[RMDB]
RNA sequence: GGGAACGACUCGAGUAGAGUCGAAAAGCAGGCUAACUGUGAUUCUCUCUGUUGAAGAGUCAAAACAGAUACUCAUCCAGUCCAAGCAAAAGUAACACAAGGAGGCGUUGUUUUUAUAGGACCUGUGUCAAAAUGUCCUUUUCGAAGGACAUUUUGAAAAAGAAACAACAACAACAAC
Reactivity to DMS in 0.01 (KOAc 150mM, MgCl2 10mM, bicine 150mM(pH8.5), 24C), signal-to-noise 4, nucleotides 027 to 126: g020c020a030g010g010c150u000a100a110c020u000g000u000g000a240u000u010c030u000c030u000c030u000g020u000u010g010a110a080g000a040g000u020c060a060a060a110a070c070a040g010a100u010a070c060u000c050a110u000c050c040a090g000u010c050c060a080a090g020c130a030a050a050a070g010u000a030a050c060a030c090a080a060g010g020a100g010g000c150g000u000u000g010u000u000u000u010u000a070u000a170g010g010a080c030c050u000g000u010g010
Reactivity to 2A3 in 0.01 (KOAc 150mM, MgCl2 10mM, bicine 150mM(pH8.5), 24C), signal-to-noise 2, nucleotides 027 to 126: g040c050a010g060g020c060u180a190a070c020u150g030u010g080a050u050u020c020u010c000u000c030u030g160u130u100g200a300a100g030a020g090u110c060a070a080a000a000c030a000g060a030u060a040c020u050c100a070u020c020c030a010g060u000c000c000a040a020g010c060a020a040a000a100g030u030a050a000c010a000c030a110a110g060g030a030g060g060c070g030u020u000g030u060u070u020u030u020a140u030a030g010g010a010c000c020u120g090u130g070